[RMDB]
Record summary
The data come from the RNA Mapping Database (RMDB), library M2PK50. The record gives the reactivity of an RNA of 177 nucleotides to DMS and 2A3. Reactivities are given for positions 27 through 126. For 2A3, 4,299 sequencing reads were counted. The RNA was probed in 150 mM KOAc, 10 mM MgCl2 and 150 mM bicine (pH 8.5) at 24 C. DMS adducts were read by reverse transcription with MarathonRT.
RNA sequence: GGGAACGACUCGAGUAGAGUCGAAAAGCUUAGCAGUUCGCUGCUAAGCGACGUUGACGGCCCUCACCGUUCACAAAUCCCAAUGAGGACAGGUGACUGACAGAUAUUAAGCGUUCGCGCUUAAUAAUCUUUUCAUAUAUUUCGAUAUAUGAAAAGAAAAAGAAACAACAACAACAAC
Reactivity to DMS in 0.01 (KOAc 150mM, MgCl2 10mM, bicine 150mM(pH8.5), 24C), signal-to-noise 5, nucleotides 027 to 126: g010c000u000u010a010g020c000a020g010u000u020c210g010c000u000g000c000u000a010a010g010c010g020a020c180g000u000u010g010a050c050g000g000c070c020c040u000c030a160c010c000g000u010u010c110a060c080a070a100a120u000c010c010c000a130a080u010g000a030g020g010a260c060a040g010g010u010g000a130c090u000g000a110c190a080g010a150u000a010u000u000a010a010g010c000g030u000u000c200g020c010g010c000u000u010a010a010u000a030a100
Reactivity to 2A3 in 0.01 (KOAc 150mM, MgCl2 10mM, bicine 150mM(pH8.5), 24C), signal-to-noise 3, nucleotides 027 to 126: g000c000u010u000a000g010c010a010g010u050u120c170g080c090u000g020c000u000a000a000g000c000g000a010c040g060u050u110g010a010c010g000g010c020c060c000u000c000a050c000c020g040u080u060c040a020c030a030a120a050u060c030c010c000a000a110u150g020a050g010g040a010c030a030g070g030u060g050a080c030u040g030a040c030a040g130a060u030a000u090u010a020a000g000c000g040u030u110c260g000c010g030c070u000u010a000a000u010a010a040